[RMDB]
RNA sequence: GGGAACGACUCGAGUAGAGUCGAAAAGAUAUGGAUGUAGAACUACACAGGAAGCGUCAACAGCUCGGAAACGAGACAUGACGAUAACUGUGCUACAUCCUAAGUCAAACUCGGGUUCGCCCGAGAACCAGGUGCAUUACUUCGGUAAUGCACCUGGAAAAGAAACAACAACAACAAC
Reactivity to 2A3 in 0.01 (KOAc 150mM, MgCl2 10mM, bicine 150mM(pH8.5), 24C), signal-to-noise 1, nucleotides 027 to 126: g000a010u160a040u140g040g000a030u010g020u020a010g060a100a110c180u300a060c300a000c000a010g080g020a210a300g020c010g010u020c000a070a090c050a220g000c020u020c000g010g130a080a120a040c030g020a010g030a060c060a060u100g000a000c000g000a020u050a050a000c000u000g000u000g030c000u000a000c000a000u040c010c000u000a040a010g010u000c010a000a000a250c000u000c020g030g000g000u150u130c240g100c040c010c000g010a010g000a010a030
An RNA of 177 nucleotides, treated with 2A3 and read out base by base. The 2A3 profile rests on 1,202 reads. It was measured as part of the RMDB library TTRDEL.